RNA sequence: GGGAACGACUCGAGUAGAGUCGAAAACAAGACCGUAGCUCUCCACCCAGCGCGGGUGCAUUCUGGCUCUUAUAUAUACUCAUUGUCAUGACAGAGUAUAUUGUACUGUGUUGAUAGGGGACGGGUAAAUCCUCCUAUCAUUCGUGAUAGGAGGAUUAAAAGAAACAACAACAACAAC
Reactivity to DMS in 0.01 (KOAc 150mM, MgCl2 10mM, bicine 150mM(pH8.5), 24C), signal-to-noise 6, nucleotides 027 to 126: c070a100a120g020a100c040c020g010u010a080g020c040u000c020u000c090c070a070c080c030c010a080g020c100g020c100g000g000g020u000g010c050a080u000u010c120u000g000g000c030u010c060u000u000a050u010a020u000a020u000a020c010u000c010a160u010u000g010u000c130a120u000g010a080c060a080g010a020g010u000a010u000a010u000u010g010u000a060c080u000g010u000g020u000u010g010a090u010a080g020g000g010g000a030c060g000g010g010u000a050
Reactivity to 2A3 in 0.01 (KOAc 150mM, MgCl2 10mM, bicine 150mM(pH8.5), 24C), signal-to-noise 4, nucleotides 027 to 126: c000a000a040g070a080c000c010g060u040a050g020c020u010c010u040c050c020a060c030c030c000a020g050c040g000c030g050g040g010u020g010c000a040u130u070c030u120g100g000c010u000c020u170u070a050u010a000u000a010u010a170c000u020c030a130u120u210g070u050c110a100u150g080a040c020a040g000a000g000u010a000u020a010u020u040g010u020a050c050u020g010u010g010u150u070g050a080u070a110g000g000g000g020a020c020g000g020g010u050a050

Notes
An RNA of 177 nucleotides, treated with DMS and 2A3 and read out base by base. It was measured as part of the RMDB library OK2TST. For DMS, 8,830 sequencing reads were counted. 2A3 is a SHAPE reagent: it acylates the 2'-hydroxyl of flexible nucleotides of all four kinds.